An RNA of 207 nucleotides, treated with 2A3 and read out base by base. For 2A3 the reverse transcriptase was SuperScript II with manganese. The reactions ran in a buffer of 150 mM KOAc, 10 mM MgCl2 and 150 mM bicine (pH 8.5), at 24 C.

[RMDB]
RNA sequence: GGGAACGACUCGAGUAGAGUCGAAAAGUAGAGUGUAUCAUGUCAGUAAGCAUGCCGGGGAAUGGUGGUUUACCCCGUUACCAAAUGAUUACCGACCAAUAAUUGGCGAAACUCGUUUCGCGUUGGCAAAGUCACGGCGUGUUCGCACGCCGUGAAACACUGGCACUAACUUCGGUUAGUGCCAGUGAAAAGAAACAACAACAACAAC
Reactivity to 2A3 in 0.01 (KOAc 150mM, MgCl2 10mM, bicine 150mM(pH8.5), 24C), signal-to-noise 2, nucleotides 027 to 156: g150u140a050g010a020g050u100g030u060a070u230c050a000u060g070u030c040a010g240u130a130a000g000c010a040u020g030c020c020g000g000g000g020a000a000u030g030g000u040g030g060u040u030u090a040c000c020c000c000g020u010u010a020c010c010a000a000a020u080g020a000u030u100a030c000c030g070a090c030c040a030a080u170a140a080u140u120g090g000c000g010a030a000a010c110u070c110g000u050u000u000c020g020c010g020u000u030g090g100c060a030a030a030g040u010c000a000c000g000g000c000g000u000g020u040u020c130g010c060a000c000g000c010c000g000u000g000a000a000a000